Description:
An RNA of 177 nucleotides, treated with 2A3 and read out base by base. For 2A3 the reverse transcriptase was SuperScript II with manganese. It was measured as part of the RMDB library RFM100.

[RMDB]
RNA sequence: GGGAACGACUCGAGUAGAGUCGAAAAGAAAGAAAGAAAAUGCUUUGCUAAAGCUGGUAAAAUGGAACCAAAUCACCUCUUCAAUGGAUUUGGUCCCCUUCAACCAGCUGUAGCUAUGCUUUGAUAAGCCUGGUUGUUGUUUCGACAACAACCAGGCAAAAGAAACAACAACAACAAC
Reactivity to 2A3 in 0.01 (KOAc 150mM, MgCl2 10mM, bicine 150mM(pH8.5), 24C), signal-to-noise 2, nucleotides 027 to 126: g070a000a000a000g160a030a010a000g120a020a110a050a030u170g000c020u060u050u080g000c020u020a060a000a090g020c000u000g000g000u090a140a180a080a000u110g010g010a040a020c000c000a000a000a000u080c080a250c100c060u300c050u230u280c170a250a300u250g020g000a000u010u000u000g010g020u000c050c000c000c000u000u050c080a050a000c000c000a000g040c020u020g000u000a010g000c020u000a020u100g070c000u160u000u070g120a130u120a210a000